[RMDB]
RNA sequence: GGGAACGACUCGAGUAGAGUCGAAAACAGGGAAGCUUCGGCUUCCCUGAAAACCUUUGUGAGAGGAAGAUCGAUAAGUAAUGAGGUUCCCAUUGGGAACCCAUUACUUUUGACGAUCGCUCUCACUCUGGUAAAGAGAACGUGUUCGCACGUUCUCCAGAGAGUGCAAGUUCGCUUGCACUCUCUGAAAAGAAACAACAACAACAAC
Reactivity to 2A3 in 0.01 (KOAc 150mM, MgCl2 10mM, bicine 150mM(pH8.5), 24C), signal-to-noise 1, nucleotides 027 to 156: c020a010g010g010g010a010a000g010c020u100u140c220g080g020c000u000u000c000c000c000u000g000a000a000a000a000c000c000u000u000u000g000u010g000a000g000a010g040g130a300a170g000a100u000c020g000a020u020a030a000g020u000a000a000u050g040a110g250g010u010u000c050c010c030a110u170u300g020g000g000a000a010c000c000c000a000u000u000a000c000u000u020u010u030g020a010c010g000a000u010c000g030c000u000c000u000c000a000c000u000c000u000g000g000u110a130a130a000g020a000g010a000a000c000g000u020g030u170u170c270g000c100a000c000g000u000u000c000u000c000
Reactivity to DMS in 0.01 (KOAc 150mM, MgCl2 10mM, bicine 150mM(pH8.5), 24C), signal-to-noise 1, nucleotides 027 to 156: c030a020g010g000g030a030a000g060c000u000u000c300g070g000c000u000u000c020c010c010u010g000a000a030a060a070c000c010u000u000u010g030u010g030a040g000a030g040g000a040a140g000a000u000c000g010a190u000a020a020g000u000a010a000u000g010a140g010g010u000u000c000c000c000a300u000u000g110g080g000a020a020c000c000c010a000u000u000a000c010u000u010u010u000g000a180c110g010a040u000c000g020c010u000c000u010c000a000c000u000c050u000g000g000u000a070a100a170g000a040g010a030a020c000g020u000g000u000u000c300g000c010a020c000g010u000u000c000u010c000